[RMDB]
RNA sequence: GGGAACGACUCGAGUAGAGUCGAAAACGAUAGUUCGCUAUCGCCGAACCCGUAGGGCUCUUGUCAGCAGAGACAUAGCGAUGAAAUUCGAAAGAGUGGAGCUAUGUUCUGCUUGGAUUUAGAGCCCUAAACGGCAACUUGUGCGUUCGCGCACAAACACCAGUACAUCAUUCGUGAUGUACUGGUGAAAAGAAACAACAACAACAAC
Reactivity to 2A3 in 0.01 (KOAc 150mM, MgCl2 10mM, bicine 150mM(pH8.5), 24C), signal-to-noise 4, nucleotides 027 to 156: c030g000a010u020a010g030u090u060c260g010c100u020a010u020c010g000c020c020g090a100a080c030c000c000g010u020a020g010g000g000c010u000c000u000u020g000u000c010a000g020c000a000g030a010g010a050c000a000u010a000g020c010g140a170u030g040a050a040a010u050u010c030g050a120a080a060g000a050g010u030g000g000a030g000c000u010a010u000g000u010u000c000u010g000c000u010u060g020g000a010u200u180u200a000g000a000g000c000c000c000u000a000a000a000c000g030g000c020a070a060c100u050u060g000u010g020c020g020u020u060c260g020c010g000c110a000c010a000a020a000
Reactivity to DMS in 0.01 (KOAc 150mM, MgCl2 10mM, bicine 150mM(pH8.5), 24C), signal-to-noise 2, nucleotides 027 to 156: c020g000a020u000a000g020u000u010c300g020c000u000a030u000c030g010c000c040g040a120a190c030c000c030g030u000a020g020g010g050c000u000c000u000u000g010u000c030a080g000c020a010g000a150g000a030c030a030u020a000g030c000g000a190u020g010a110a060a080u000u010c010g020a270a120a300g060a020g000u000g000g010a210g000c000u000a020u000g000u000u000c010u000g000c000u010u010g010g000a040u000u000u000a010g000a020g000c020c000c010u010a000a030a050c030g000g000c070a080a130c140u010u000g030u000g010c020g050u000u010c300g020c040g020c030a050c000a030a040a290

Source: RMDB library RNAMAK, as collected in RNAgym. Structure probing data (2A3 and DMS) for a 207-nucleotide construct. DMS adducts were read by reverse transcription with MarathonRT. Reactivities are given for positions 27 through 156. For DMS, 4,474 sequencing reads were counted.